[RMDB]
RNA sequence: GGGAACGACUCGAGUAGAGUCGAAAACGGUUACGCCUUCUUUACCGUUAUCAAGGAAGGUACUCGGCCAUGCUAAGGGAAGCAUUAUUCCUUAGGCGCAUAUCGCCGCCAGCAUGGUGUGAGGGGAAAAAGUAUGCUGGGUUCGCCCAGCAUACAACAAACGCACGUAGUUCGCUACGUGCGUUUGAAAAGAAACAACAACAACAAC
Reactivity to 2A3 in 0.01 (KOAc 150mM, MgCl2 10mM, bicine 150mM(pH8.5), 24C), signal-to-noise 4, nucleotides 027 to 156: c010g010g010u030u050a050c050g010c010c000u010u000c020u010u020u030a020c010c020g220u130u090a030u070c100a000a000g060g000a010a000g010g000u030a050c020u000c010g000g000c000c000a000u020g010c010u070a110a140g010g010g000a010a030g000c080a130u070u140a130u190u140c010c000u010u100a080g010g000c000g030c040a060u130a070u300c100g040c090c010g000c020c040a000g020c000a000u010g000g040u050g120u130g040a030g000g020g040g110a030a080a010a040a010g010u000a000u000g000c000u000g010g000g030u050u100c170g120c010c000c000a000g000c000a000u000a000c000a010a010
Reactivity to DMS in 0.01 (KOAc 150mM, MgCl2 10mM, bicine 150mM(pH8.5), 24C), signal-to-noise 1, nucleotides 027 to 156: c030g010g040u000u000a030c030g040c000c000u000u000c020u000u010u010a020c010c020g020u000u010a060u020c060a050a020g000g010a000a030g040g030u010a050c000u000c000g010g030c000c020a010u000g020c010u000a250a200g020g000g000a040a090g010c150a160u000u010a140u000u000c010c010u000u000a160g000g020c010g090c100a100u010a070u000c010g000c000c000g000c090c060a060g000c000a030u000g010g010u010g030u020g020a070g010g010g000g000a050a050a090a070a160g010u000a000u000g010c000u010g010g000g030u000u000c300g020c000c000c000a000g000c000a010u000a020c000a040a200